An RNA of 177 nucleotides, treated with DMS and 2A3 and read out base by base. The RNA was probed in 150 mM KOAc, 10 mM MgCl2 and 150 mM bicine (pH 8.5) at 24 C.
[RMDB]
RNA sequence: GGGAACGACUCGAGUAGAGUCGAAAAUCAGUAACAUUCAUUGCUUUGUUCAGUACGGGCCCAUGGGUGAUUGAACUUCUGUUGUAAACACCACAUACAAUUAUAGGCAAAAGUUUAAACAAAGGCCGUACCUUCGUAAUUUCGAUUACGAAGGUACAAAAGAAACAACAACAACAAC
Reactivity to DMS in 0.01 (KOAc 150mM, MgCl2 10mM, bicine 150mM(pH8.5), 24C), signal-to-noise 2, nucleotides 027 to 126: u000c070a130g000u010a100a110c080a050u000u010c080a130u010u000g010c090u020u000u010g010u010u000c020a140g000u000a030c070g020g020g000c010c030c050a070u000g000g000g000u010g020a150u000u000g000a040a050c040u010u000c100u010g000u000u000g020u020a050a070a150c050a090c070c050a070c110a080u010a090c150a040a070u010u010a070u010a110g010g000c040a060a030a060a120g000u000u000u030a040a080a070c090a050a080a060g010g010c070c070
Reactivity to 2A3 in 0.01 (KOAc 150mM, MgCl2 10mM, bicine 150mM(pH8.5), 24C), signal-to-noise 1, nucleotides 027 to 126: u090c030a010g100u100a080a050c040a100u070u150c030a040u020u150g060c040u140u060u140g060u140u120c060a100g000u120a010c000g000g060g000c040c020c030a020u040g080g000g000u040g010a170u070u090g010a050a020c000u070u030c060u020g110u070u010g030u050a040a030a030c020a030c010c030a050c060a040u140a010c010a090a040u200u100a130u170a190g070g000c010a030a030a030a140g030u050u130u150a110a060a020c040a020a010a000g020g010c000c040